Notes: Chemical mapping of a 207-nucleotide RNA with DMS and 2A3. The DMS profile rests on 8,044 reads. The data come from the RNA Mapping Database (RMDB), library M2RFPK.
[RMDB]
RNA sequence: GGGAACGACUCGAGUAGAGUCGAAAAGCCGAUGAAUUGCCGAGAAGCCUGGCUCGAAAUCGUCGACGCAUCGACGACGGUCCUGCUAUGAGACCGUAACGAGGACAUGUCGCCUCGAAUGGCGUCGUAUAACAUGAGUGGUUCGCCACUCAUGUAACCCCUUUAUAUGUUUCGACAUAUAAAGGGGAAAAGAAACAACAACAACAAC
Reactivity to DMS in 0.01 (KOAc 150mM, MgCl2 10mM, bicine 150mM(pH8.5), 24C), signal-to-noise 3, nucleotides 027 to 156: g020c030c020g000a070u000g000a100a080u010u000g020c050c010g010a110g000a090a100g020c050c060u000g030g000c010u010c020g010a040a080a060u000c050g010u010c000g000a040c050g010c070a160u000c000g010a020c000g000a030c000g000g030u010c000c010u010g020c050u000a090u000g000a110g000a060c060c010g020u000a020a060c030g010a060g010g060a080c030a090u000g000u000c020g010c000c020u000c040g030a090a090u010g030g020c020g020u000c030g020u000a070u000a090a070c000a000u010g020a050g010u000g010g010u000u000c300g020c000c000a020c020u000c000a000u010g000u000a050a090
Reactivity to 2A3 in 0.01 (KOAc 150mM, MgCl2 10mM, bicine 150mM(pH8.5), 24C), signal-to-noise 8, nucleotides 027 to 156: g060c020c020g020a050u110g040a050a190u170u130g030c060c020g040a050g060a150a020g050c040c080u070g030g000c030u030c040g060a070a070a050u080c040g050u030c000g010a010c020g020c090a060u070c010g040a020c010g000a000c010g000g000u000c000c010u040g070c030u060a050u120g080a100g040a140c050c020g000u030a020a010c010g020a000g000g010a010c030a110u150g030u120c060g010c020c030u020c000g020a030a050u060g040g020c010g010u050c020g000u070a080u040a220a010c000a000u000g000a000g010u010g030g010u040u060c150g040c070c000a000c010u000c000a010u000g000u000a010a010